[RMDB]
RNA sequence: GGGAACGACUCGAGUAGAGUCGAAAAUGCUCUUAAGUCACUGUGAGUUCUCUGCUGAAGCGGAAGAAAACACUGGUAAAUUAAGUUGACAAUACUCUGAGAACGAAUUUCAGUUCCAGACUUAGUUUAAACUUUAUCCUGUAGGCAGUGCAGAGACCAAUACUCCGGUCUUCGGACCGGAGUAUUGAAAAGAAACAACAACAACAAC
Reactivity to 2A3 in 0.01 (KOAc 150mM, MgCl2 10mM, bicine 150mM(pH8.5), 24C), signal-to-noise 3, nucleotides 027 to 156: u110g010c000u000c000u090u110a100a060g080u140c010a020c030u030g030u030g070a070g050u120u020c010u000c010u020g000c010u180g040a250a050g020c040g020g030a100a100g030a040a170a050a010c070a020c040u030g030g040u080a040a110a100u120u070a020a020g020u020u000g010a010c020a020a070u080a100c020u000c010u010g180a250g000a250a010c010g040a110a110u250u240u170c060a060g010u000u000c000c000a010g010a010c010u030u080a000g070u040u040u110a070a050a010c010u020u020u040a030u070c010c000u020g040u080a040g150g000c020a010g020u000g000c000a010g010a010g010a060c030
Reactivity to DMS in 0.01 (KOAc 150mM, MgCl2 10mM, bicine 150mM(pH8.5), 24C), signal-to-noise 2, nucleotides 027 to 156: u000g000c010u000c020u020u000a080a050g050u010c040a060c060u000g030u000g050a190g000u010u000c020u010c030u000g000c040u000g020a150a260g000c020g010g030a100a090g010a080a020a060a120c060a300c050u010g010g030u020a050a040a080u000u010a010a040g030u000u010g000a120c080a030a060u000a070c060u010c060u000g010a150g020a030a060c030g030a130a160u010u000u000c150a170g040u010u010c000c020a080g000a030c010u000u000a140g010u000u000u000a040a060a050c060u000u000u010a110u000c000c020u010g010u000a270g020g050c060a060g000u000g010c000a130g010a090g010a100c210